[RMDB]
RNA sequence: GGGAACGACUCGAGUAGAGUCGAAAACCCUCUAGCAAGAUGCAGGCCGGAGCCUGUGUCUCGUUCCCUGGGGCGAUAGCUCUUGCUGGCAGGUCUUGCAGUGUCCAUACCCGGGCAACACGUUUUCCUUUAGACCAGAGUUCGCUCUGGUCUAAAGAAAAGAAACAACAACAACAAC
Reactivity to 2A3 in 0.01 (KOAc 150mM, MgCl2 10mM, bicine 150mM(pH8.5), 24C), signal-to-noise 3, nucleotides 027 to 126: c000c010c000u000c070u020a020g010c020a030a000g000a010u020g000c000a000g020g020c000c060g240g030a050g030c020c010u030g030u020g000u010c010u000c010g050u060u080c010c010c000u050g000g000g010g000c030g090a080u100a080g010c000u000c000u020u080g010c030u020g000g020c000a040g000g090u010c010u050u050g000c020a020g010u010g020u040c000c000a030u070a170c040c040c040g010g030g000c060a060a000c080a010c080g010u020u000u040u110c000
Reactivity to DMS in 0.01 (KOAc 150mM, MgCl2 10mM, bicine 150mM(pH8.5), 24C), signal-to-noise 2, nucleotides 027 to 126: c020c000c000u020c150u040a090g000c060a050a030g000a030u000g000c020a060g010g020c000c180g000g010a120g030c030c010u020g000u040g000u000c010u000c000g000u010u000c030c030c010u000g010g000g020g030c050g000a110u010a110g000c000u000c040u000u000g000c010u030g000g000c040a050g000g000u020c040u010u000g000c010a070g000u020g010u010c020c020a130u020a120c170c060c000g000g010g010c020a040a080c060a160c100g000u010u000u020u000c040
Overview
This 177-nucleotide RNA was probed chemically with 2A3 and DMS. For 2A3, 2,954 sequencing reads were counted. Source: RMDB libraries RFM100 and RFMREP, as collected in RNAgym. The RNA was probed in 150 mM KOAc, 10 mM MgCl2 and 150 mM bicine (pH 8.5) at 24 C. DMS adducts were read by reverse transcription with MarathonRT.